[RMDB]
RNA sequence: GGGAACGACUCGAGUAGAGUCGAAAAGAGGGGAAAGGAUCUACUAUGAUACUGCACCAGACCCGAGGCCCAAAUUGCUGGCCUUUGUGAGAAAGACGCCAAUGGGAAGUAUACGUUCCCUCCAAGGCGCAGUAAACGGGUUCGCCCGUUUACUGCGAAAAGAAACAACAACAACAAC
Reactivity to DMS in 0.01 (KOAc 150mM, MgCl2 10mM, bicine 150mM(pH8.5), 24C), signal-to-noise 1, nucleotides 027 to 126: g010a250g000g010g000g020a190a190a040g010g000a030u000c020u000a160c140u000a050u010g040a080u000a050c020u000g020c160a150c030c030a080g000a120c010c020c030g000a030g000g010c000c010c060a050a060a020u020u000g010c180u000g010g010c000c000u010u010u000g040u000g000a060g000a120a090a050g000a110c110g000c030c000a040a070u010g030g020g010a050a070g010u020a080u040a100c080g000u000u000c000c020c010u000c060c110a110a150g000g000